[RMDB]
RNA sequence: GGGAACGACUCGAGUAGAGUCGAAAAAAACUUUUGUGACUUGCUGAAACGGGACUAAUGUCCUCACCGAGGCUAAGCAAGUAAAAUACGCCUCUCAUAUCCUUACCUGAGGGUGGUAAGGAAAUAACCUGCAACGCUUCCUUCGGGAAGCGUUGAAACUCCAUUAGAACUUCGGUUCUAAUGGAGUAAAAGAAACAACAACAACAAC
Reactivity to 2A3 in 0.01 (KOAc 150mM, MgCl2 10mM, bicine 150mM(pH8.5), 24C), signal-to-noise 2, nucleotides 027 to 156: a000a000a010c140u180u080u110u090g060u020g040a060c000u020u020g000c010u010g030a050a050a060c060g000g010g010a000c040u140a180a130u300g000u010c010c000u010c030a030c010c040g000a000g010g020c010u040a040a000g010c000a010a030g050u120a020a000a050a000u120a030c050g000c010c010u000c010u010c030a060u060a040u250c000c000u000u010a000c000c010u030g070a060g050g040g020u010g020g000u010a000a000g000g000a000a030a000u030a020a020c010c050u070g000c000a000a000c000g010c000u000u010c000c000u010u100c070g050g000g000a020a000g010c000g000u000u000g000a000a000